The record gives the reactivity of an RNA of 177 nucleotides to DMS and 2A3. In probing experiments dimethyl sulfate is read out at A N1 and C N3, which are open when not base-paired. Source: RMDB library M2PK90, as collected in RNAgym. DMS adducts were read by reverse transcription with MarathonRT. For DMS, 1,922 sequencing reads were counted.
[RMDB]
RNA sequence: GGGAACGACUCGAGUAGAGUCGAAAAGCAACAUAGAUCGUUCUAUUAACGAACACGCGCGGAUCGUCGGUGGUCGGCGAGCCCACGGACGAACUUGAUCGCGCGAACGAGUAAAAAUCGCCGGCAAGAAAUGUAGAGUCUUCGGACUCUACAUUUCAAAAGAAACAACAACAACAAC
Reactivity to DMS in 0.01 (KOAc 150mM, MgCl2 10mM, bicine 150mM(pH8.5), 24C), signal-to-noise 3, nucleotides 027 to 126: g020c070a050a070c110a130u000a090g000a110u000c050g000u010u000c040u000a280u010u000a020a120c140g000a090a050c120a190c070g030c020g000c030g000g020a080u000c000g000u000c000g010g020u010g000g010u000c030g010g010c020g040a030g000c180c000c000a020c010g000g000a010c000g000a030a130c160u000u000g010a070u010c000g000c000g020c020g000a010a040c070g000a080g000u000a050a050a000a040a040u000c000g000c010c000g000g000c270a090a140
Reactivity to 2A3 in 0.01 (KOAc 150mM, MgCl2 10mM, bicine 150mM(pH8.5), 24C), signal-to-noise 3, nucleotides 027 to 126: g030c010a000a110c010a090u180a070g110a130u040c010g030u030u010c070u070a250u200u180a120a060c080g020a050a020c050a010c120g010c000g000c000g000g090a110u000c000g000u030c070g120g000u020g000g000u020c030g000g020c010g000a060g120c000c000c030a020c010g100g000a000c000g000a000a050c000u110u160g090a080u300c010g000c000g000c000g010a000a000c020g000a010g040u100a050a110a030a010a000u000c010g000c000c000g030g090c090a120a060